Source: RMDB library P50LIB, as collected in RNAgym. Chemical mapping of a 115-nucleotide RNA with DMS. DMS (dimethyl sulfate) methylates the pairing face of unpaired adenines and cytosines. Reactivities are given for positions 27 through 95. For DMS the reverse transcriptase was MarathonRT. The reactions ran in a buffer of 150 mM KOAc, 10 mM MgCl2 and 150 mM bicine (pH 8.5), at 24 C.
RNA sequence: GGGAACGACUCGAGUAGAGUCGAAAAUAAAAGUCUCGAAUCAGUCAAAAGCCGUAGAGGCACGAGACAAAUGACUGGCCCGGGUUCGCCCGGGCAAAAGAAACAACAACAACAAC
Reactivity to DMS in 0.01 (KOAc 150mM, MgCl2 10mM, bicine 150mM(pH8.5), 24C), signal-to-noise 2, nucleotides 027 to 095: u030a060a110a090a090g020u000c000u000c000g030a190a180u030c120a060g070u050c100a020a100a160a080g000c010c010g000u030a150g000a200g000g030c010a120c050g010a050g000a060c010a050a070a040u010g010a040c050u010g020g000c020c040c020g000g020g000u000u010c160g020c000c000c010g000g000g040c000a000